[RMDB]
RNA sequence: GGGAACGACUCGAGUAGAGUCGAAAAGGCGCACAGUGAUGGAACACGUGCACUGGUGGCUGGCGGGCCUGGCGUUCACGCUCGGGAUGGUGCUGACGUCGACGCUGAUGGUCCGGCCCGUCGAACACACCGUAGCACGUUUCGACGUGCUACGGUGAAAAGAAACAACAACAACAAC
Reactivity to DMS in 0.01 (KOAc 150mM, MgCl2 10mM, bicine 150mM(pH8.5), 24C), signal-to-noise 2, nucleotides 027 to 126: g000g010c030g020c000a020c020a070g010u010g000a120u020g020g000a140a150c070a040c000g020u010g000c010a050c010u000g010g020u000g020g030c050u000g000g030c020g030g010g000c010c000u000g010g000c020g010u010u000c160a010c050g020c160u000c020g010g000g010a220u000g010g000u000g000c030u000g010a070c050g010u000c110g040a020c060g010c060u020g000a030u010g030g010u000c000c020g000g020c010c000c030g000u000c000g000a070a100c170a150
Reactivity to 2A3 in 0.01 (KOAc 150mM, MgCl2 10mM, bicine 150mM(pH8.5), 24C), signal-to-noise 3, nucleotides 027 to 126: g060g000c040g020c020a030c070a110g040u060g040a110u170g050g120a220a030c050a000c000g040u020g030c040a010c060u030g070g030u030g000g050c030u030g000g010c010g000g000g020c000c010u040g010g000c020g030u020u040c020a020c020g050c100u000c010g000g000g130a160u190g120g090u280g110c050u030g010a040c000g030u040c050g010a010c020g000c040u020g050a140u190g060g060u010c000c030g000g000c000c010c030g000u030c020g080a120a010c060a000
An RNA of 177 nucleotides, treated with DMS and 2A3 and read out base by base. For 2A3 the reverse transcriptase was SuperScript II with manganese. For DMS the reverse transcriptase was MarathonRT.